[RMDB]
RNA sequence: GGGAACGACUCGAGUAGAGUCGAAAAGAUAUGGAAGUGUAGUGCUCUUGGAUUUACUCAAUGGCUAUGUAUGUCGGAAACGACAUACUAAGGCCAUUGAGUUGUCAGAGCAUACACUUCCUAAGUCGUAGAUUAACGAGUUCGCUCGUUAAUCUACAAAAGAAACAACAACAACAAC
Reactivity to 2A3 in 0.01 (KOAc 150mM, MgCl2 10mM, bicine 150mM(pH8.5), 24C), signal-to-noise 4, nucleotides 027 to 126: g020a040u200a060u240g000g020a010a020g020u030g020u050a260g300u100g100c010u010c040u120u280g300g020a100u300u300u200a020c000u000c010a000a000u000g000g000c000u040a030u210g010u010a010u010g010u000c000g010g000a040a060a140c000g000a010c000a000u000a000c010u010a140a110g030g000c000c000a000u000u000g000a000g000u010u000g000u010c000a000g000a000g000c000a000u010a000c000a000c000u000u000c010c010u000a010a010g010u010c070
Reactivity to DMS in 0.01 (KOAc 150mM, MgCl2 10mM, bicine 150mM(pH8.5), 24C), signal-to-noise 3, nucleotides 027 to 126: g000a120u010a300u000g000g000a010a000g010u010g030u000a020g060u000g030c000u010c000u000u000g020g010a040u020u010u010a010c000u000c000a000a000u000g000g030c020u000a300u000g000u000a000u000g000u000c000g000g000a190a100a220c000g020a020c010a010u000a000c000u040a060a140g010g000c000c000a000u000u000g000a000g020u000u000g020u000c010a030g000a000g010c000a040u000a000c000a020c000u000u000c000c000u010a010a080g030u010c140